An RNA of 207 nucleotides, treated with 2A3 and DMS and read out base by base.
The RNA was probed in 150 mM KOAc, 10 mM MgCl2 and 150 mM bicine (pH 8.5) at 24 C.
For 2A3, 10,296 sequencing reads were counted.
DMS (dimethyl sulfate) methylates the pairing face of unpaired adenines and cytosines.
RNA sequence: GGGAACGACUCGAGUAGAGUCGAAAAGUUUACGCUCCAAGAUCGGUGGAUAGCAGCCCUAUCAAUAUCUAGGAGAACUGUGCUAUGUUUAGGAGAUUAGGUAGUCUCUAAACAGAACAAUUUACCUCAUACGUUAGGACGUUCGCGUCCUAACGAACUUAGUCGAUAUGUUCGCAUAUCGACUAAGAAAAGAAACAACAACAACAAC
Reactivity to 2A3 in 0.01 (KOAc 150mM, MgCl2 10mM, bicine 150mM(pH8.5), 24C), signal-to-noise 9, nucleotides 027 to 156: g010u030u090u100a060c050g010c010u000c000c010a030a020g010a030u070c100g090g180u090g110g020a030u020a020g030c070a010g020c050c010c000u030a030u030c040a060a060u040a020u140c020u060a070g020g010a020g010a030a040c080u100g020u040g080c030u050a030u100g020u010u010u010a130g040g060a080g030a030u050u050a050g080g050u040a020g020u000c010u000c000u010a000a010a000c010a020g050a050a020c080a060a040u050u090u130a070c010c020u080c050a110u110a170c010g000u000u000a000g000g000a000c000g000u030u040c250g010c010g050u000c000c000u000a000a000c000g000a000a000
Reactivity to DMS in 0.01 (KOAc 150mM, MgCl2 10mM, bicine 150mM(pH8.5), 24C), signal-to-noise 3, nucleotides 027 to 156: g020u000u020u010a050c080g020c020u000c010c020a090a170g000a060u000c110g000g020u000g020g010a090u000a060g040c070a240g000c140c110c010u000a130u010c010a100a100u000a080u010c060u000a130g010g010a300g040a040a060c030u000g010u010g020c050u000a130u000g010u000u000u000a040g040g020a050g000a050u000u000a100g040g030u010a130g000u010c000u010c000u000a020a020a020c000a070g000a050a040c030a040a070u000u000u000a110c020c010u000c060a100u020a150c010g030u000u000a010g000g010a020c000g050u010u000c300g030c040g040u000c000c010u010a000a010c010g000a020a050